[RMDB]
RNA sequence: GGGAACGACUCGAGUAGAGUCGAAAAGAGCCAGAGGACAUGUUGAGGGUGACAUAGGUUCUGAAGUUCGUACAGAUACUUAUGCAGUAUGGAUUCUUGGAAAACCUUCUUUAGUCAUGUGAUAGAAAAAUAACAGCUUAUGGAAAAAACAGGGUUGCACAUCAGUCAAGUUCGCUUGACUGAUGUGAAAAGAAACAACAACAACAAC
Reactivity to 2A3 in 0.01 (KOAc 150mM, MgCl2 10mM, bicine 150mM(pH8.5), 24C), signal-to-noise 3, nucleotides 027 to 156: g040a010g010c010c030a030g050a090g000g030a010c020a090u090g030u060u070g050a040g020g000g060u030g030a000c000a010u140a040g040g000u010u000c000u020g020a060a030g030u090u150c070g020u100a020c020a040g080a070u060a110c010u070u080a050u240g060c070a010g050u120a050u050g010g000a020u000u020c010u030u060g020g000a000a000a050a060c000c000u090u080c020u020u130u040a070g010u030c030a060u060g060u010g130a080u050a220g060a050a180a030a000a010u080a040a010c010a030g020c020u080u030a060u100g040g020a130a110a000a060a000a000c040a040g000g010g040u000u040g030
Reactivity to DMS in 0.01 (KOAc 150mM, MgCl2 10mM, bicine 150mM(pH8.5), 24C), signal-to-noise 2, nucleotides 027 to 156: g010a120g050c040c030a120g040a120g070g010a070c030a080u000g000u000u000g000a080g000g020g040u020g020a040c090a090u000a020g000g020u000u000c000u000g000a160a050g040u000u010c090g040u000a290c070a060g030a100u000a060c020u010u000a040u000g030c030a130g040u010a130u000g000g010a110u000u000c020u000u020g030g000a040a030a110a050c010c020u000u000c070u020u000u010a110g000u000c030a090u000g020u060g000a200u000a150g020a010a040a050a070a090u000a090a080c030a030g010c020u000u000a080u010g010g020a020a050a040a010a020a050c050a020g000g030g000u020u010g010

The record gives the reactivity of an RNA of 207 nucleotides to 2A3 and DMS. Source: RMDB library OK3TST, as collected in RNAgym. The reactions ran in a buffer of 150 mM KOAc, 10 mM MgCl2 and 150 mM bicine (pH 8.5), at 24 C.